RNA sequence: GGGAACGACUCGAGUAGAGUCGAAAAAUUCAGGAGAGUAGAUGAUUCGCGUUUAGUGUGUGUGAAUGGGAUGUCGUCACACAACGAAGCGAGAGCGCGGUGAAUCAUUGCAUCCGCUCCAAACGAAGUGUUAUCACUUAUUCGUAAGUGAUAACACAAAAGAAACAACAACAACAAC
Reactivity to DMS in 0.01 (KOAc 150mM, MgCl2 10mM, bicine 150mM(pH8.5), 24C), signal-to-noise 9, nucleotides 027 to 126: a160u010u000c070a140g010g000a020g010a030g000u000a300g010a010u000g010a020u000u000c000g020c010g010u010u000u010a110g010u010g020u000g020u000g010u000g010a040a060u010g020g010g010a010u000g000u000c220g000u000c000a000c000a000c010a020a020c010g010a140a120g010c020g010a170g010a130g020c020g020c150g000g010u010g010a020a010u000c010a020u000u000g000c020a010u000c000c010g000c010u000c000c010a070a080a090c200g000a070a100
Reactivity to 2A3 in 0.01 (KOAc 150mM, MgCl2 10mM, bicine 150mM(pH8.5), 24C), signal-to-noise 9, nucleotides 027 to 126: a000u090u060c040a020g000g010a010g000a010g010u050a010g000a030u010g000a000u020u010c010g010c040g060u080u100u220a140g000u160g010u000g000u000g000u000g070a040a020u020g010g000g020a010u030g040u080c100g030u010c010a000c000a000c000a020a030c020g070a130a020g010c020g030a050g020a010g060c030g000c030g020g020u020g010a010a010u010c000a010u000u020g000c000a000u000c000c000g000c000u000c000c010a050a040a020c080g080a180a040